[RMDB]
This 177-nucleotide RNA was probed chemically with 2A3 and DMS. The DMS profile rests on 2,149 reads. High DMS reactivity at an A or C suggests that its Watson-Crick edge is free. Source: RMDB library OK1LIB, as collected in RNAgym. Reactivities are given for positions 27 through 126.
RNA sequence: GGGAACGACUCGAGUAGAGUCGAAAAUCGACGAUGUGGUCGCCUGGCUCACCGAGCGGUUGUAGGCCGAGCCGACCUGUCGCAGCCCUCCACUAGUUUUGGCGCCAUGACCAACGACAAGAUGCUGCUUAGUCUGGUGUUUCGACACCAGACUAAGAAAAGAAACAACAACAACAAC
Reactivity to 2A3 in 0.01 (KOAc 150mM, MgCl2 10mM, bicine 150mM(pH8.5), 24C), signal-to-noise 5, nucleotides 027 to 126: u140c030g060a060c020g030a060u100g100u130g190g010u020c020g010c010c010u030g040g000c010u030c020a010c020c020g070a080g110c200g090g020u080u110g050u140a080g090g000c030c040g000a030g030c070c000g010a020c000c000u030g010u000c000g010c020a030g030c020c010c000u050c010c010a060c040u060a040g040u030u030u080u120g040g000c030g010c040c040a060u050g060a090c000c000a030a060c050g080a060c050a050a050g020a070u120g040c060u040g000
Reactivity to DMS in 0.01 (KOAc 150mM, MgCl2 10mM, bicine 150mM(pH8.5), 24C), signal-to-noise 2, nucleotides 027 to 126: u020c100g000a110c030g000a070u020g000u000g000g030u000c050g030c060c060u010g000g000c000u010c040a100c040c030g000a120g000c200g000g010u000u000g020u000a070g040g000c020c060g030a130g020c170c030g040a080c050c020u000g000u000c020g000c060a130g000c000c000c000u000c010c060a060c080u020a130g020u020u010u000u000g000g020c040g000c000c040a060u000g000a130c130c060a030a080c190g030a130c060a110a050g050a110u000g050c070u000g020